[RMDB]
RNA sequence: GGGAACGACUCGAGUAGAGUCGAAAAGUAUCUUGUCUGAAAACAGCUCCGUACAAUGGAGAAUUAGGAUUUGUGAACAUGGUCUGGAAGUGACCCACCAUGUGGGAUAGAUCCCUGUAGGUCACCAGGCCUGGAGCACGUUCGCGUGCUCCAGGCCAAAAGAAACAACAACAACAAC
Reactivity to 2A3 in 0.01 (KOAc 150mM, MgCl2 10mM, bicine 150mM(pH8.5), 24C), signal-to-noise 1, nucleotides 027 to 126: g010u070a000u250c090u300u300g000u000c070u150g160a200a200a200a200c160a000g000c000u000c000c000g000u000a290c160a230a000u020g050g140a000g000a090a230u050u140a020g000g000a130u000u000u300g160u000g050a000a000c000a000u000g000g050u160c180u090g000g000a120a120g000u000g090a000c000c000c000a000c000c140a000u070g070u120g070g000g000a000u090a300g090a070u300c000c000c000u000g050u050a000g000g000u000c000a000c000c000a020
An RNA of 177 nucleotides, treated with 2A3 and read out base by base. It was measured as part of the RMDB library OK1LIB. Values cover nucleotides 27 to 126. The 2A3 profile rests on 255 reads. For 2A3 the reverse transcriptase was SuperScript II with manganese. Conditions: 150 mM KOAc, 10 mM MgCl2 and 150 mM bicine (pH 8.5), 24 C.